[RMDB]
RNA sequence: GGGAACGACUCGAGUAGAGUCGAAAAACUUGCGGUGCGGUAUUGUGGAGACAUACCGCAAGGUUUCCAUCAAGCCUGAUGGUUACAAGGCGGCUUCUUGCAAAGAUUCAGCCGUCAUAGUCGAAUGAAGACGCAUUAACUUCGGUUAAUGCGUCUUAAAAGAAACAACAACAACAAC
Reactivity to 2A3 in 0.01 (KOAc 150mM, MgCl2 10mM, bicine 150mM(pH8.5), 24C), signal-to-noise 3, nucleotides 027 to 126: a000c040u040u010g020c030g020g040u020g010c030g040g070u110a100u090u250g090u050g090g090a130g020a020c010a000u110a040c000c000g000c020a010a010g010g050u000u080u020c000c000a000u050c060a060a020g130c020c120u070g010a020u030g070g000u020u040a050c090a110a080g010g000c000g000g000c010u060u010c010u050u170g070c120a170a100a040g030a020u080u230c080a010g000c000c000g000u020c000a010u040a030g020u030c060g120a090a090u250g030
Reactivity to DMS in 0.01 (KOAc 150mM, MgCl2 10mM, bicine 150mM(pH8.5), 24C), signal-to-noise 3, nucleotides 027 to 126: a060c020u010u000g000c020g010g000u000g000c170g010g030u020a050u020u010g050u030g000g010a140g000a050c050a070u000a050c000c020g010c030a030a020g000g000u020u000u010c000c000a100u000c070a050a060g010c110c070u000g020a010u010g010g000u000u000a050c160a150a060g000g010c020g010g000c000u000u000c050u020u000g030c240a140a080a090g010a080u040u020c260a030g010c000c000g000u000c010a050u020a030g000u000c100g040a140a120u030g010